RNA sequence: GGGAACGACUCGAGUAGAGUCGAAAAUUGGCAUUGGUAGCGGCAUUUAAAGUCAGACCAGCCUUGCUGGUCUCCUUCAUUUUCAGAGCCAAUUGGACACCCCGUGAGAGCAUGCUGCUAGCCCUGGCCUAUUUUGCAAGUUCGCUUGCAAAAUAGGAAAAGAAACAACAACAACAAC
Reactivity to DMS in 0.01 (KOAc 150mM, MgCl2 10mM, bicine 150mM(pH8.5), 24C), signal-to-noise 3, nucleotides 027 to 126: u000u010g000g000c000a130u020u030g010g030u030a040g000c020g000g010c020a020u000u000u010a030a050a020g000u000c220a010g000a010c000c000a000g000c010c230u010u060g010c000u020g000g000u000c030u000c170c010u000u020c050a060u010u000u000u000c040a120g020a160g000c000c000a010a030u010u020g030g010a120c180a150c110c000c000c050g000u050g020a080g010a130g000c090a110u010g000c010u000g000c020u000a090g000c040c020c070u010g000g000
Reactivity to 2A3 in 0.01 (KOAc 150mM, MgCl2 10mM, bicine 150mM(pH8.5), 24C), signal-to-noise 8, nucleotides 027 to 126: u020u010g000g010c050a050u020u260g070g010u050a010g010c020g010g010c010a020u020u080u250a130a080a010g050u080c050a000g000a010c000c000a000g010c030c120u030u300g020c000u000g000g000u010c000u000c010c000u080u090c030a160u060u060u100u160c070a030g030a010g070c000c000a010a010u010u020g030g020a040c040a170c060c020c000c020g070u120g090a120g010a020g070c080a030u050g010c010u010g010c000u020a160g030c000c030c020u040g050g000
Structure probing data (DMS and 2A3) for a 177-nucleotide construct. For DMS the reverse transcriptase was MarathonRT. The DMS profile rests on 4,648 reads. The 2A3 profile rests on 8,105 reads. 2A3 is a SHAPE reagent: it acylates the 2'-hydroxyl of flexible nucleotides of all four kinds.